[RMDB]
RNA sequence: GGGAACGACUCGAGUAGAGUCGAAAAUAGAUGAGAAUGGGCACUGUUGAUCAAGGUGUCCAAAAAUAGUUAAUGUGGCUAAAUUGAGAUAGGUUAUGCUUCCAUCACAGUAUGCAUAUUGCAGUGGGAAAUGGACUUACUUCGGUAAGUCCAUUUCAAAAGAAACAACAACAACAAC
Reactivity to DMS in 0.01 (KOAc 150mM, MgCl2 10mM, bicine 150mM(pH8.5), 24C), signal-to-noise 2, nucleotides 027 to 126: u010a080g010a060u000g010a120g020a190a130u000g000g010g020c000a010c020u000g020u000u000g030a070u010c120a080a240g020g000u000g000u000c000c000a000a010a070a040a080u010a050g010u000u020a050a060u010g020u020g000g010c040u000a050a070a110u000u000g000a070g000a050u000a050g030g010u000u000a030u000g030c070u000u000c060c020a060u000c030a050c110a100g000u000a060u000g000c030a090u020a080u010u000g000c030a040g010u000g000g020
Reactivity to 2A3 in 0.01 (KOAc 150mM, MgCl2 10mM, bicine 150mM(pH8.5), 24C), signal-to-noise 2, nucleotides 027 to 126: u100a040g070a080u130g080a000g080a090a070u020g000g000g000c010a010c010u000g090u130u140g060a090u080c080a040a080g010g000u030g030u000c000c010a000a000a000a000a000u020a000g020u000u060a080a010u110g010u010g090g010c000u040a050a110a090u040u060g040a070g020a090u060a140g000g070u100u020a080u130g020c070u040u050c040c010a040u070c000a010c010a050g070u090a050u040g000c020a040u050a050u190u200g050c010a000g040u070g060g020